Structure probing data (2A3 and DMS) for a 177-nucleotide construct.
RNA sequence: GGGAACGACUCGAGUAGAGUCGAAAAGCAGCACGUAAACAGGUAUAAUUUUGUCUUUAGUUCAACAGGAUGUAAAAUCAGCUUGAAGACAUGCAUCGGGAAAUUGAUAAAGGACUUAAACCCUAAGCCAAUUGCAAUUUUUCGAAAUUGCAAUUGGAAAAGAAACAACAACAACAAC
Reactivity to 2A3 in 0.01 (KOAc 150mM, MgCl2 10mM, bicine 150mM(pH8.5), 24C), signal-to-noise 3, nucleotides 027 to 126: g010c010a000g010c000a020c100g040u090a040a160a010c030a020g000g060u100a100u030a150a150u020u060u050u050g010u020c020u030u110u070a090g060u070u030c010a020a040c000a030g100g070a030u020g020u150a030a120a010a190u070c020a010g080c020u160u180g080a110a010g030a020c020a040u080g010c000a020u010c000g020g050g050a050a120a120u040u000g010a010u050a110a060a050g000g000a010c010u010u030a060a120a090c020c000c000u020a050a020g030
Reactivity to DMS in 0.01 (KOAc 150mM, MgCl2 10mM, bicine 150mM(pH8.5), 24C), signal-to-noise 3, nucleotides 027 to 126: g000c070a040g020c050a040c060g010u000a080a070a110c080a050g010g020u000a050u010a100a090u000u000u000u000g000u000c020u000u000u000a080g000u000u000c060a050a110c090a090g000g010a020u000g010u010a040a060a100a170u020c050a080g000c110u000u020g010a080a100g000a060c090a080u000g020c050a050u000c020g010g010g000a030a060a100u010u010g010a050u010a050a070a070g010g000a040c030u010u000a040a070a160c080c010c010u010a090a120g000

The 2A3 profile rests on 2,201 reads. The data come from the RNA Mapping Database (RMDB), library OK2TRN. The RNA was probed in 150 mM KOAc, 10 mM MgCl2 and 150 mM bicine (pH 8.5) at 24 C. For DMS the reverse transcriptase was MarathonRT.